[RMDB]
RNA sequence: GGGAACGACUCGAGUAGAGUCGAAAAGGGCUAAGCUGCAUGCCGUGGUUCCUGCCACCACGUAAAACAGGUAGGGAAAACACAACUGCCAACAACGAAUUGGCACUCGCUGCUUAAUUAAAAGCAGCCGUCUUCCCAAGUUCUGCUCUGAGGCUUGCCAGUAACAUAACUUCGGUUAUGUUACUGGAAAAGAAACAACAACAACAAC
Reactivity to DMS in 0.01 (KOAc 150mM, MgCl2 10mM, bicine 150mM(pH8.5), 24C), signal-to-noise 2, nucleotides 027 to 156: g040g010g020c040u000a080a110g040c000u000g020c040a110u010g020c140c010g000u010g010g040u010u000c040c020u000g000c000c000a150c030c000a000c030g000u000a040a110a120a100c020a050g010g060u000a170g020g030g000a010a030a040a060c060a090c060a090a110c140u010g020c020c000a030a070c070a060a110c120g010a050a210u000u000g000g000c010a070c060u020c070g020c020u020g010c000u010u000a090a150u000u010a110a100a050a070g030c000a010g010c000c100g000u000c020u000u000c000c000c030a090a300g020u000u000c030u010g000c020u010c040u030g020a140g020g000c040u000u020g010
Reactivity to 2A3 in 0.01 (KOAc 150mM, MgCl2 10mM, bicine 150mM(pH8.5), 24C), signal-to-noise 6, nucleotides 027 to 156: g040g010g000c030u050a030a010g020c020u060g020c050a050u110g040c040c000g000u000g000g010u060u140c010c010u020g000c000c010a170c010c010a010c050g180u190a000a000a010a030c030a020g000g010u020a020g010g020g020a040a070a100a000c120a020c030a060a150c070u060g000c010c000a020a020c010a050a090c080g090a120a130u020u000g000g000c010a020c020u080c040g000c010u030g010c010u040u060a100a110u130u160a160a300a030a010g000c000a000g000c000c010g030u010c020u030u020c000c000c000a020a010g030u060u030c030u050g010c020u000c020u060g040a040g010g030c000u020u030g020